[RMDB]
RNA sequence: GGGAACGACUCGAGUAGAGUCGAAAAGAUAUGGACCUGGCUAGCUUUUGACGCUGGGGUUUCGGAAACGAAACCGACAGCGAUAAGCUAGCAGGUCCUAAGUCAAACAGUGCCUUCGGGCACUGAAGGGAUAAAACAGGUUCGCCUGUUUUAUCCCAAAAGAAACAACAACAACAAC
Reactivity to DMS in 0.01 (KOAc 150mM, MgCl2 10mM, bicine 150mM(pH8.5), 24C), signal-to-noise 1, nucleotides 027 to 126: g010a030u000a300u010g010g010a030c000c000u000g000g060c000u000a000g000c000u000u000u000u010g000a160c100g000c000u000g000g000g000g000u000u000u000c010g040g000a140a120a140c010g000a000a000a000c000c000g010a200c030a000g000c000g030a060u010a010a050g000c000u000a000g000c030a000g000g000u010c000c000u000a010a080g000u000c010a170a090a250c000a000g000u000g000c000c000u000u020c260g040g010g020c000a000c000u000g000a090a110
Reactivity to 2A3 in 0.01 (KOAc 150mM, MgCl2 10mM, bicine 150mM(pH8.5), 24C), signal-to-noise 1, nucleotides 027 to 126: g020a000u020a000u130g010g010a000c010c020u040g300g190c000u100a010g000c020u200u150u110u300g280a140c050g020c010u040g100g000g000g010u000u010u000c030g000g000a050a060a030c030g000a020a000a010c010c000g080a080c050a010g000c000g040a050u030a120a000g010c000u000a010g000c000a000g010g010u010c000c000u000a010a000g000u000c010a040a100a020c010a020g020u000g010c000c000u040u170c300g060g000g000c000a000c000u000g010a020a040